RNA sequence: GGGAACGACUCGAGUAGAGUCGAAAAGAUAUGGAAAUCCUGUACUCGUUGAAAUCGGAAACGAUGGAGAGUUGCAGGAGUUUCCUAAGUCAAAAUCAGUAGCAUUCCUUCGGGAAUGCUACUGAAACAAACGAACUGUGUUCGCACAGUUCGUUUGAAAAGAAACAACAACAACAAC
Reactivity to DMS in 0.01 (KOAc 150mM, MgCl2 10mM, bicine 150mM(pH8.5), 24C), signal-to-noise 3, nucleotides 027 to 126: g010a060u000a300u010g010g000a010a010a050u010c000c010u010g000u010a020c010u000c000g000u010u020g000a100a160a010u000c000g000g000a160a110a190c010g000a010u000g000g000a110g000a030g000u000u000g060c010a000g010g000a030g020u000u000u000c000c010u010a020a160g000u010c040a060a070a100a140u000c010a000g000u000a010g010c000a010u010u000c000c000u000u010c290g000g010g000a000a000u010g010c000u000a000c000u000g000a010a070a120
Reactivity to 2A3 in 0.01 (KOAc 150mM, MgCl2 10mM, bicine 150mM(pH8.5), 24C), signal-to-noise 1, nucleotides 027 to 126: g010a020u050a030u120g000g000a030a000a010u010c000c000u000g000u020a000c000u000c030g270u300u070g040a020a040a000u000c000g030g050a070a080a030c020g000a010u000g000g030a030g020a010g030u080u300g000c010a000g030g060a020g020u010u020u000c000c000u000a110a020g040u030c020a000a010a020a300u060c010a000g000u000a000g000c000a020u010u020c000c050u070u070c300g040g000g010a000a000u000g010c000u000a000c010u010g000a000a020a000
The data come from the RNA Mapping Database (RMDB), library TTRDEL. An RNA of 177 nucleotides, treated with DMS and 2A3 and read out base by base. For 2A3, 2,129 sequencing reads were counted. Values cover nucleotides 27 to 126. For DMS the reverse transcriptase was MarathonRT. The RNA was probed in 150 mM KOAc, 10 mM MgCl2 and 150 mM bicine (pH 8.5) at 24 C. High DMS reactivity at an A or C suggests that its Watson-Crick edge is free.